[RMDB]
Source: RMDB library OK1LIB, as collected in RNAgym. The record gives the reactivity of an RNA of 177 nucleotides to DMS and 2A3. DMS adducts were read by reverse transcription with MarathonRT. For 2A3, 1,440 sequencing reads were counted. Conditions: 150 mM KOAc, 10 mM MgCl2 and 150 mM bicine (pH 8.5), 24 C.

RNA sequence: GGGAACGACUCGAGUAGAGUCGAAAAAUUGGCGACAAGGUCCGAUAGAUGACGCGAAUACUUAGGGGUUGAAACGCAGUCCUACACGGAGCACGUAGGAGCGUCAAUGAGAAUGAUCUGAAGACGCAAAUAAAUAUUUAUUCGUAAAUAUUUAUUUAAAAGAAACAACAACAACAAC
Reactivity to DMS in 0.01 (KOAc 150mM, MgCl2 10mM, bicine 150mM(pH8.5), 24C), signal-to-noise 7, nucleotides 027 to 126: a090u020u020g000g020c040g010a060c040a050a080g000g000u000c010c050g000a130u020a060g010a100u020g000a050c050g000c010g000a120a090u010a040c050u010u020a100g000g010g000g000u000u020g010a060a080a080c110g000c050a080g010u010c010c000u000a060c070a110c080g000g000a080g010c100a040c110g010u000a030g000g000a220g020c010g000u000c010a030a160u010g000a070g000a140a110u030g000a070u000c010u000g000a180a110g000a040c030g020c040
Reactivity to 2A3 in 0.01 (KOAc 150mM, MgCl2 10mM, bicine 150mM(pH8.5), 24C), signal-to-noise 2, nucleotides 027 to 126: a000u080u060g020g010c000g010a060c010a050a000g030g000u000c000c000g000a000u020a050g090a020u100g010a000c010g000c010g030a020a020u070a050c040u090u040a010g030g000g040g020u020u070g070a100a030a000c020g000c020a020g040u000c000c000u040a010c090a000c090g110g010a050g060c050a000c070g020u040a040g030g060a010g000c000g010u020c000a000a040u100g010a040g040a170a250u300g030a060u060c010u000g020a020a000g030a000c010g000c000